[RMDB]
RNA sequence: GGGAACGACUCGAGUAGAGUCGAAAAAAAGGUAUUAAGUGUUCAUUUGUCCCCUUUAUCACAAUACAGCAGACAGAAGUUAUCUGGCAACCUUGUGAGAUGCAGCUAAAAUAAAAAGGUGAAGCCAGUGUUGACAGAGUCUGGGAUAGAGAAAAUACUCAGCUAAAUGAUUCGUCAUUUAGCUGAGAAAAGAAACAACAACAACAAC
Reactivity to 2A3 in 0.01 (KOAc 150mM, MgCl2 10mM, bicine 150mM(pH8.5), 24C), signal-to-noise 1, nucleotides 027 to 156: a000a000a000g100g010u140a050u150u170a170a110g060u050g070u140u160c100a150u040u030u170g130u010c020c010c000c000u020u110u010a020u060c050a030c060a270a120u220a240c070a090g030c000a000g050a000c000a000g150a150a000g130u010u000a060u050c000u010g000g010c000a020a000c010c000u050u020g060u040g130a060g010a110u240g030c020a000g010c030u170a080a020a060a040u090a040a030a040a110a000g030g000u000g090a150a000g000c010c020a010g020u040g000u040u070g000a010c020a050g040a020g030u020c040u010g000g000g050a000u020a000g000a000g000a050a110a000a000u040a050
Reactivity to DMS in 0.01 (KOAc 150mM, MgCl2 10mM, bicine 150mM(pH8.5), 24C), signal-to-noise 1, nucleotides 027 to 156: a030a000a070g000g000u000a150u030u010a030a070g040u000g020u010u030c070a100u010u000u000g000u000c010c020c010c030u000u000u000a060u000c010a170c080a070a020u010a090c110a250g000c020a060g010a030c020a150g060a210a240g000u010u000a090u000c030u000g000g090c000a200a030c000c010u000u000g030u000g020a200g000a160u000g030c100a050g010c020u030a020a060a040a090u000a090a110a030a050a010g010g050u000g000a050a080g090c000c000a000g060u010g040u000u000g010a080c040a050g010a300g010u000c040u020g000g020g000a110u000a090g030a150g060a050a130a080a080u020a210
Structure probing data (2A3 and DMS) for a 207-nucleotide construct. The RNA was probed in 150 mM KOAc, 10 mM MgCl2 and 150 mM bicine (pH 8.5) at 24 C.